[RMDB]
RNA sequence: GGGAACGACUCGAGUAGAGUCGAAAACGACUCCAGAAGUGGGUAAGACUAUUGAGGUUCAGACACCUCUUGAGCCUGUGCCGGAAGUAUUAGCAGCAACCACAUUUGUGGAGGCAACUAUUGAUGGCUCAGCUGCGGACUUCGGUCCGCAGCUGAGAAAAGAAACAACAACAACAAC
Reactivity to 2A3 in 0.01 (KOAc 150mM, MgCl2 10mM, bicine 150mM(pH8.5), 24C), signal-to-noise 1, nucleotides 027 to 126: c000g000a000c000u000c000c000a000g000a210a140g030u160g000g160g070u030a070a040g040a190c000u000a070u250u240g000a060g040g010u110u080c060a210g040a120c060a000c030c000u030c080u000u040g000a000g090c000c100u040g010u010g000c000c060g040g000a190a000g040u000a290u250u060a090g160c190a000g010c100a180a000c000c000a180c150a300u120u300u280g050u000g000g040a000g000g070c000a010a010c060u000a000u050u040g040a040u000g040g000